[RMDB]
RNA sequence: GGGAACGACUCGAGUAGAGUCGAAAAGAUAUGGAUCUAAUUAGGGAGCUGGUGGUCGGAAACGACCACUCAGCUUUGAUCUAAGGAUCCUAAGUCAAACUCGCAUCUAAGUUCGCUUAGAUGCGAGCAUGGUUGCCUUGUUCGCAAGGCAACCAUGAAAAGAAACAACAACAACAAC
Reactivity to DMS in 0.01 (KOAc 150mM, MgCl2 10mM, bicine 150mM(pH8.5), 24C), signal-to-noise 1, nucleotides 027 to 126: g000a020u010a060u030g010g000a000u000c000u010a100a210u000u000a010g000g000g010a040g020c000u000g010g020u000g000g000u010c000g040g000a020a000a010c010g010a030c010c010a000c000u030c010a020g000c000u010u000u010g020a060u020c000u000a010a120g000g010a010u000c000c000u000a010a120g000u000c000a090a170a300c000u000c000g040c000a020u040c000u010a000a000g000u000u010c270g070c000u010u000a000g010a000u010g010c010g000a000g010